The record gives the reactivity of an RNA of 207 nucleotides to DMS and 2A3.
Source: RMDB library RNAMAK, as collected in RNAgym.
The DMS profile rests on 2,128 reads.
For 2A3 the reverse transcriptase was SuperScript II with manganese.
For DMS the reverse transcriptase was MarathonRT.
[RMDB]
RNA sequence: GGGAACGACUCGAGUAGAGUCGAAAAGGGGUCCCAACGAUGAAAUCACAGUUGCUAACAGGGAGCUGAAGCCUCCACGGCGAAGAACUGUUAGGCACUCUGUGAUGGAGUUGGGACGGAGGCACCCAAAACUUUAAUAGAUUCGUCUAUUAAAGAAGUAUGAUAGGUUCUUCGGAACCUAUCAUACAAAAGAAACAACAACAACAAC
Reactivity to DMS in 0.01 (KOAc 150mM, MgCl2 10mM, bicine 150mM(pH8.5), 24C), signal-to-noise 1, nucleotides 027 to 156: g010g050g030g040u010c000c000c020a030a020c010g020a140u010g020a090a100a070u010c010a020c020a010g000u000u000g000c000u000a040a050c020a020g010g010g020a150g000c050u000g000a060a150g000c030c010u000c010c130a300c130g000g000c000g030a110a150g010a110a280c000u000g000u000u010a070g030g000c040a110c130u000c000u010g020u000g020a040u000g000g000a170g010u000u010g020g010g010a010c040g060g030a060g040g030c010a070c020c000c010a050a030a110a140c020u000u000u000a000a010u000a020g020a070u000u010c290g010u000c010u000a020u010u000a000a010a010g010a050a170
Reactivity to 2A3 in 0.01 (KOAc 150mM, MgCl2 10mM, bicine 150mM(pH8.5), 24C), signal-to-noise 3, nucleotides 027 to 156: g020g000g020g010u020c030c000c000a000a000c060g170a300u170g070a050a040a010u010c000a010c000a000g070u160u100g070c000u000a000a000c000a010g060g010g000a050g010c010u040g040a170a000g020c000c000u060c100c040a040c050g020g000c030g190a140a000g000a030a010c020u010g000u000u020a060g120g000c020a030c140u130c010u010g000u000g000a000u010g000g020a050g000u000u000g000g010g000a000c000g000g010a010g000g000c030a020c000c020c000a020a150a090a100c010u010u010u000a010a000u000a000g010a020u020u040c130g030u010c070u000a000u010u000a000a010a000g010a050a010